[RMDB]
RNA sequence: GGGAACGACUCGAGUAGAGUCGAAAACUGCCGACGCCCUGUGUGGAGGCGUGGUGUCGCCUCUAGUCAGUCGUUGAGAUCCGAAGAAGGGUGUACUUCUGACUGAUCGAGCAGAAGUGAGUCGAGGGCGUCUGCCUUGGUUCGCCAGGGUGGGCGCAAAAGAAACAACAACAACAAC
Reactivity to 2A3 in 0.01 (KOAc 150mM, MgCl2 10mM, bicine 150mM(pH8.5), 24C), signal-to-noise 9, nucleotides 027 to 126: c020u050g000c000c000g030a020c000g020c000c010c020u090g060u020g020u070g030g020a040g000g000c010g010u060g030g050u040g020u010c000g000c000c000u000c000u000a020g080u000c000a000g000u000c000g000u000u010g010a030g010a060u000c000c020g020a060a030g060a050a070g080g010g010u050g030u030a050c000u000u000c010u020g100a130c010u020g060a230u140c100g110a030g000c010a000g000a050a010g030u040g040a030g030u060c040g020a080g030g090
Reactivity to DMS in 0.01 (KOAc 150mM, MgCl2 10mM, bicine 150mM(pH8.5), 24C), signal-to-noise 9, nucleotides 027 to 126: c020u000g000c010c000g000a170c020g010c000c020c140u020g010u050g030u000g000g000a140g000g000c010g010u010g000g000u010g000u000c000g000c050c000u000c000u000a020g000u000c010a030g000u000c000g000u000u000g010a120g000a050u020c010c020g010a120a080g010a090a090g000g010g010u010g010u030a050c000u000u000c000u000g010a130c070u010g000a100u030c160g000a090g010c020a030g000a030a040g000u000g000a080g010u000c020g010a150g000g000

Annotation: This 177-nucleotide RNA was probed chemically with 2A3 and DMS. The 2A3 profile rests on 93,058 reads. Reactivities are rounded to 0.1 and cut off at 0 and 3. Conditions: 150 mM KOAc, 10 mM MgCl2 and 150 mM bicine (pH 8.5), 24 C. It was measured as part of the RMDB library OK1LIB. In probing experiments dimethyl sulfate is read out at A N1 and C N3, which are open when not base-paired.